[RMDB]
RNA sequence: GGGAACGACUCGAGUAGAGUCGAAAAGUCUGUGCGUUUCCAUUUGAGUAUCCUGAAAACGGGCUUUUCAGCAUGGAACGUACAUAUUAAAUAGUAGGAGUGAAUAGUGGCCCGUAUAGCAGGCAUUGAGGCGAGGAUUGUUUCGACAAUCCUCGAAUGCUUCCGGAAUAUUCGUAUUCCGGAAGCAAAAAGAAACAACAACAACAAC
Reactivity to 2A3 in 0.01 (KOAc 150mM, MgCl2 10mM, bicine 150mM(pH8.5), 24C), signal-to-noise 1, nucleotides 027 to 156: g110u050c040u000g000u000g000c020g000u080u150u010c010c000a040u080u060u050g080a100g030u120a120u090c000c020u000g080a010a020a100a230c090g050g000g000c010u100u060u020u110c060a040g010c070a020u010g010g000a000a000c000g010u010a000c000a000u020a000u000u110a100a010a090u130a040g120u050a020g080g000a050g030u080g050a070a110u030a080g080u070g020g010c020c000c010g000u030a030u060a050g040c010a030g000g050c030a030u050u160g120a050g050g030c010g000a000g010g000a000u000u000g000u000u030u060c050g030a000c010a010a010u000c000c000u000c000g000a000a000
Reactivity to DMS in 0.01 (KOAc 150mM, MgCl2 10mM, bicine 150mM(pH8.5), 24C), signal-to-noise 1, nucleotides 027 to 156: g010u010c060u000g010u000g010c000g030u000u000u000c010c020a110u010u000u020g000a140g010u010a110u010c070c010u000g020a050a010a180a120c070g030g020g040c200u010u000u000u000c030a060g030c200a010u000g000g010a080a030c010g020u000a010c010a000u000a040u000u000a050a100a130u010a100g000u000a100g030g010a180g030u000g000a090a090u010a110g000u000g030g010c030c010c030g000u000a130u010a090g000c110a020g020g030c010a110u000u010g010a110g000g000c060g000a050g000g050a010u000u000g000u010u000u020c300g000a000c020a010a010u010c000c010u000c000g010a030a020